[RMDB]
RNA sequence: GGGAACGACUCGAGUAGAGUCGAAAAAUUUUAGGGUCUACUACUGGAGGACUAGUCUUAAGACAGUGGGACAAAAGUUCUUGGGAUUUUCGCCCCUUAAUCAAUAUGCACAUGUUGACUACCUAUGUGUAAGGCAGUCAAGAGAAGCAGAGAAGAACGUAAUAAAUAGUUUCGACUAUUUAUUACGAAAAGAAACAACAACAACAAC
Reactivity to DMS in 0.01 (KOAc 150mM, MgCl2 10mM, bicine 150mM(pH8.5), 24C), signal-to-noise 3, nucleotides 027 to 156: a130u000u010u000u000a070g000g030g020u000c040u000a080c050u000a110c020u000g030g000a120g040g000a080c050u000a140g020u000c060u000u000a110a140g000a070c090a080g010u000g020g010g020a120c020a040a080a080a100g020u000u000c010u010u000g010g030g020a100u000u000u000u000c060g010c040c000c030c000u000u000a030a100u000c050a050a150u010a110u000g000c010a100c140a180u010g010u010u010g010a020c010u000a030c000c000u000a110u020g030u000g030u000a110a040g000g000c000a030g010u000c010a040a080g000a090g010a090a180g010c030a060g010a120g020a080a100g000a050a140
Reactivity to 2A3 in 0.01 (KOAc 150mM, MgCl2 10mM, bicine 150mM(pH8.5), 24C), signal-to-noise 5, nucleotides 027 to 156: a000u210u220u130u120a040g020g000g020u010c020u040a050c010u030a030c030u100g090g030a020g010g010a000c010u030a030g020u010c020u070u100a110a050g080a070c050a070g060u090g040g000g030a010c010a020a170a030a030g010u030u030c000u060u060g060g000g040a130u070u070u020u060c040g020c000c000c000c000u040u130a070a060u080c060a030a080u070a040u210g010c010a060c020a070u060g070u130u020g030a010c000u030a030c000c010u050a070u140g160u010g070u140a040a030g010g000c000a000g000u020c020a010a000g030a000g000a070a020g000c040a010g030a000g010a100a020g040a090a020
The record gives the reactivity of an RNA of 207 nucleotides to DMS and 2A3. Conditions: 150 mM KOAc, 10 mM MgCl2 and 150 mM bicine (pH 8.5), 24 C. For 2A3, 3,716 sequencing reads were counted. DMS adducts were read by reverse transcription with MarathonRT. Source: RMDB library OK3TST, as collected in RNAgym.